[RMDB]
RNA sequence: GGGAACGACUCGAGUAGAGUCGAAAAAGGCGUGCAACGAACCCAUUCCACUAUUAGUUUUGCCAGCUCCGGCUUGUGAUACCUCUUAUCAGGAUCACGGGAAUCCCUCCCGUUCUCGGUAACAGUGCAUUCGUGACCGGUUCGCCGGUCACGAAUGAAAAGAAACAACAACAACAAC
Reactivity to 2A3 in 0.01 (KOAc 150mM, MgCl2 10mM, bicine 150mM(pH8.5), 24C), signal-to-noise 2, nucleotides 027 to 126: a000g110g010c020g060u030g080c100a050a060c080g080a030a080c040c020c010a000u020u020c000c000a060c060u050a090u150u090a080g130u030u000u040u210g000c000c000a030g000c090u060c000c000g110g000c010u040u090g000u040g080a000u300a300c000c000u150c000u040u120a200u270c020a000g000g000a000u030c000a000c040g070g000g020a020a080u040c010c000c000u010c000c010c000g000u060u000c000u000c020g000g050u110a130a030c080a080g010u040g060
The data come from the RNA Mapping Database (RMDB), library OK1LIB.
An RNA of 177 nucleotides, treated with 2A3 and read out base by base.
Values cover nucleotides 27 to 126.
The 2A3 profile rests on 653 reads.